Overview
An RNA of 177 nucleotides, treated with DMS and read out base by base. Values are in units of 0.01, from 0 to 300, in steps of 10. Conditions: 150 mM KOAc, 10 mM MgCl2 and 150 mM bicine (pH 8.5), 24 C. Source: RMDB library OK2TST, as collected in RNAgym.

RNA sequence: GGGAACGACUCGAGUAGAGUCGAAAAUUAGUUCAAAGUGGAAAAGCUGGUCGUACACGCUGGUUAGGAAAACGUCCUACGGUUCGUGGGUCCGUUAUGAAUCCUUGUGAUCAUCCACACGGUGGUGCAGAGACCCGAAUUUCGAUUCGGGUCUCUGAAAAGAAACAACAACAACAAC
Reactivity to DMS in 0.01 (KOAc 150mM, MgCl2 10mM, bicine 150mM(pH8.5), 24C), signal-to-noise 2, nucleotides 027 to 126: u000u000a130g020u000u000c070a090a080a110g050u000g000g020a090a060a080a160g020c050u030g010g020u000c060g000u010a120c100a060c120g030c050u010g000g020u040u000a050g020g010a070a020a040a070c130g020u000c010c020u000a030c020g030g030u010u020c060g080u000g000g010g020u000c110c040g000u000u050a090u000g000a050a080u000c000c030u000u010g020u000g030a060u010c110a070u000c060c050a050c010a160c150g010g020u000g000g030u000g000